The data come from the RNA Mapping Database (RMDB), library OK2TST. An RNA of 177 nucleotides, treated with 2A3 and DMS and read out base by base. DMS adducts were read by reverse transcription with MarathonRT. The DMS profile rests on 1,604 reads. High 2A3 reactivity points to a flexible backbone, as in loops and unpaired stretches.
[RMDB]
RNA sequence: GGGAACGACUCGAGUAGAGUCGAAAAAGCCCCCUGUCCACCGACGAGGGAUUCUCGUUCACGGCGAAGGGAUAGAACUCGCUCUCCACAUAGGCGAGGGAGAACGCAAGGAAAAGGGGGACGUCGAGCUACCAAAGUCAUUCGUGACUUUGGUAGCAAAAGAAACAACAACAACAAC
Reactivity to 2A3 in 0.01 (KOAc 150mM, MgCl2 10mM, bicine 150mM(pH8.5), 24C), signal-to-noise 3, nucleotides 027 to 126: a000g030c040c000c000c010c020u010g000u000c010c000a060c040c030g020a030c020g000a030g030g080g100a150u200u060c020u000c010g090u090u080c080a040c140g060g000c050g040a050a050g110g010g000a020u090a080g110a050a020c000u020c020g130c000u020c010u010c040c010a080c040a290u170a130g030g050c050g050a040g030g020g010a030g010a040a030c060g030c100a040a110g010g040a030a110a070a010g010g020g000g000g000a000c010g090u070c070g030a030
Reactivity to DMS in 0.01 (KOAc 150mM, MgCl2 10mM, bicine 150mM(pH8.5), 24C), signal-to-noise 3, nucleotides 027 to 126: a070g000c020c000c000c000c000u000g030u010c000c000a140c160c030g040a080c000g000a040g000g020g020a200u010u000c000u000c030g000u010u000c090a270c140g000g040c120g010a100a160g010g010g010a070u000a080g020a150a120c010u000c010g000c030u010c010u000c010c040a100c170a140u000a150g010g000c080g000a150g000g010g010a040g000a020a120c050g000c140a160a080g020g000a050a020a080a040g000g000g000g000g010a030c090g020u010c070g010a180